An RNA of 307 nucleotides, treated with 2A3 and read out base by base.
[RMDB]
RNA sequence: GGGAACGACUCGAGUAGAGUCGAAAAGAGGUGGCGGUGACGCCACCUCAACUAGUCGCUUCGGCGACUAGAGAUAUGCUCGUGAGAGCAUAUCAACGUUCUCGUGAGAGAACGAGGCGCCACGUGAGUGGCGCCAAGUGAGCGUACGCGCUCACAAGUUGACGUACGCGUCAACAAGCCUCCGGUGACGGAGGCACGCAGUGACUACGGUCACUGCGAGCGUGGAAGCCCUGCCUGGGGUUGAAGCGUUAAAACUUAAUCAGGCUACAUCUCUAUUCGUAGAGAUGAAAAGAAACAACAACAACAAC
Reactivity to 2A3 in 0.01 (KOAc 150mM, MgCl2 10mM, bicine 150mM(pH8.5), 24C), signal-to-noise 3, nucleotides 027 to 266: g000a000g000g000u000g000g010c020g030g060u120g050a010c010g010c010c000a000c000c000u000c000a000a000c000u000a000g000u000c010g020c010u040u070c270g110g000c000g000a000c000u000a000g010a000g000a000u000a000u000g000c000u000c010g030u040g020a040g000a000g000c010a000u000a000u010c010a000a040c020g000u010u010c010u020c000g060u140g040a150g000a000g000a010a000c000g000a080g020g000c010g000c010c000a020c050g110u130g130a140g030u010g020g010c000g010c010c000a010a010g000u000g000a000g000c030g010u020a050c260g020c000g000c160u020c000a010c010a010a040g000u000u000g020a000c020g010u030a030c280g060c010g120u000c000a000a000c020a020a040g000c000c000u000c000c000g010g070u070g050a040c010g000g000a000g000g000c000a000c000g000c000a020g000u000g000a000c000u030a090c300g110g000u000c000a000c000u000g000c010g000a000g000c000g010u030g000g040a020a020g000c010c000c030u060g010c000c010u010g000g000g000g010u020u020g020a020a000g000c000g010u020u050a090a090a000a030c040u110u160a050a040u180c010a000g000g000c000u010a020
2A3 adducts were read by reverse transcription with SuperScript II with manganese.